This 177-nucleotide RNA was probed chemically with DMS.
Source: RMDB library VIROID, as collected in RNAgym.
Conditions: 150 mM KOAc, 10 mM MgCl2 and 150 mM bicine (pH 8.5), 24 C.
High DMS reactivity at an A or C suggests that its Watson-Crick edge is free.
[RMDB]
RNA sequence: GGGAACGACUCGAGUAGAGUCGAAAACUUCCCGAUUCCGCCCAAACUCCUUCCCCCCAAGGGUCGCCCAGGAAUGGCGGGACCCCACUCUGCAGGGUCCGCGUUCCAUCCUUUCUUACCUGAUGGCCACAAUACACUCGUUCGCGAGUGUAUUGUGAAAAGAAACAACAACAACAAC
Reactivity to DMS in 0.01 (KOAc 150mM, MgCl2 10mM, bicine 150mM(pH8.5), 24C), signal-to-noise 1, nucleotides 027 to 126: c300u000u000c000c010c000g020a200u010u000c030c060g030c030c010c100a040a160a080c050u000c040c010u000u020c030c020c000c000c020c030a040a130g000g000g030u000c030g010c020c010c050a150g000g000a090a040u010g010g020c010g070g010g010a020c000c000c000c050a070c100u000c140u010g010c180a170g010g010g010u000c000c000g000c020g000u000u010c000c000a130u000c050c050u020u000u020c040u000u000a090c050c020u010g000a100u010g000g020c110